An RNA of 207 nucleotides, treated with DMS and 2A3 and read out base by base.
The DMS profile rests on 4,484 reads.
For 2A3 the reverse transcriptase was SuperScript II with manganese.
RNA sequence: GGGAACGACUCGAGUAGAGUCGAAAAGUACUCGAAAUCCGCUUUAUGCGAGGCUUAAUUCCUUUGUUGAGGCCGUAUUUUUGCGAAGUCUGCCCAAAGCACGUAGUGUUUGAAGAUUUCGGUCCUAUGCAAUAUGAACCCAUGAACCAUGUCAGGUACACAGGUUAAUGUUCGCAUUAACCUGUGUAAAAGAAACAACAACAACAAC
Reactivity to DMS in 0.01 (KOAc 150mM, MgCl2 10mM, bicine 150mM(pH8.5), 24C), signal-to-noise 2, nucleotides 027 to 156: g030u010a050c060u000c060g020a050a090a130u000c050c050g010c060u000u000u000a050u010g010c040g000a080g010g020c050u000u000a080a110u010u000c020c030u000u010u000g020u000u010g000a100g010g020c060c030g040u000a030u010u020u000u010u000g010c040g000a050a060g020u000c040u000g000c010c060c050a100a050a070g040c050a050c050g010u000a100g030u010g050u000u000u000g010a070a070g000a100u000u000u000c020g040g000u000c010c050u000a190u010g020c080a020a050u000a100u000g000a050a150c040c010c040a110u010g010a050a080c010c020a130u000g030u000c080a100g020g010u000
Reactivity to 2A3 in 0.01 (KOAc 150mM, MgCl2 10mM, bicine 150mM(pH8.5), 24C), signal-to-noise 4, nucleotides 027 to 156: g020u030a150c010u030c050g040a030a050a090u080c070c080g020c100u060u170u090a080u130g050c050g020a020g030g000c000u020u050a050a030u100u120c000c000u010u020u080g050u030u060g070a040g010g040c030c010g000u040a120u030u090u000u110u140g020c020g030a020a010g010u030c030u070g080c030c000c020a060a010a000g020c050a010c080g210u200a090g020u040g070u080u070u110g080a060a030g010a040u030u060u050c020g020g010u020c000c030u060a050u130g040c020a040a020u050a040u260g090a100a040c080c000c010a060u090g070a020a000c030c010a020u070g040u150c050a020g040g030u020